[RMDB]
RNA sequence: GGGAACGACUCGAGUAGAGUCGAAAAGCGUGCCGGCUCCGUUCGCCGGAGAAGCUUACUGCGGACCAACGCCGUGUGCUUCCUCGUCGAACGGUGGCGACCACGAAAAGUACACCUUCGGGUGUACGAUUUCAUCUCUCUUCGGAGAGAUGAAAUCAAAAGAAACAACAACAACAAC
Reactivity to DMS in 0.01 (KOAc 150mM, MgCl2 10mM, bicine 150mM(pH8.5), 24C), signal-to-noise 3, nucleotides 027 to 126: g000c020g020u010g040c170c000g010g010c000u000c010c010g010u000u010c010g020c040c000g020g010a020g000a000a020g000c000u010u000a010c020u000g000c010g000g000a180c220c290a170a200c050g010c000c030g010u000g000u000g000c010u000u000c000c000u000c000g000u000c000g000a000a000c000g000g000u000g000g000c020g000a050c150c000a020c000g010a070a080a100a150g010u000a010c000a010c000c000u000u000c190g010g020g010u000g010u000a000c000
Reactivity to 2A3 in 0.01 (KOAc 150mM, MgCl2 10mM, bicine 150mM(pH8.5), 24C), signal-to-noise 3, nucleotides 027 to 126: g040c010g000u010g010c010c010g100g120c000u000c010c000g010u010u000c000g000c010c010g000g000a010g000a000a000g000c000u000u080a010c010u020g000c000g040g070a200c080c100a250a100c050g000c000c010g000u010g010u030g000c000u010u000c000c000u000c000g010u000c000g000a000a000c000g010g000u000g000g000c000g000a010c000c040a010c010g010a070a050a030a080g000u000a000c000a010c000c000u030u060c220g100g000g000u000g010u000a000c000